[RMDB]
RNA sequence: GGGAACGACUCGAGUAGAGUCGAAAAGUAAAGGCGAGUGAGAAGAUCACAGAAUGCCAAAAGCACGCUUAGAAACGGACAUCUCUGAGCAAAAGUGCACGCAAUAAGCGAAAGAUGGCGAAAAAAAUAGUGUACAAAUAUUCGUAUUUGUACACUAAAAAGAAACAACAACAACAAC
Reactivity to DMS in 0.01 (KOAc 150mM, MgCl2 10mM, bicine 150mM(pH8.5), 24C), signal-to-noise 5, nucleotides 027 to 126: g010u010a050a110a090g000g000c030g000a110g020u000g010a060g010a130a080g010a100u000c020a060c060a130g010a110a050u000g000c000c000a030a040a090a120g020c040a050c030g010c010u000u000a030g020a040a080a090c090g000g030a090c120a100u010c060u000c030u010g010a070g010c060a070a040a060a140g010u000g020c170a110c020g000c010a050a110u010a060a050g000c040g020a070a090a100g000a100u000g000g010c020g000a000a000a020a060a080a070a110
Reactivity to 2A3 in 0.01 (KOAc 150mM, MgCl2 10mM, bicine 150mM(pH8.5), 24C), signal-to-noise 4, nucleotides 027 to 126: g060u070a000a090a030g080g020c050g020a040g030u030g020a050g000a140a060g040a070u030c000a020c020a050g160a110a070u190g000c000c000a030a050a020a000g010c010a000c030g000c000u010u010a010g000a020a120a010c100g090g090a030c030a110u060c030u000c010u050g020a010g000c000a000a110a150a060g010u000g010c030a010c030g000c000a010a280u160a300a060g010c020g050a100a010a030g080a040u070g030g010c010g060a030a030a020a000a000a010a070
The data come from the RNA Mapping Database (RMDB), library M2PK90.
The record gives the reactivity of an RNA of 177 nucleotides to DMS and 2A3.
2A3 adducts were read by reverse transcription with SuperScript II with manganese.
Values cover nucleotides 27 to 126.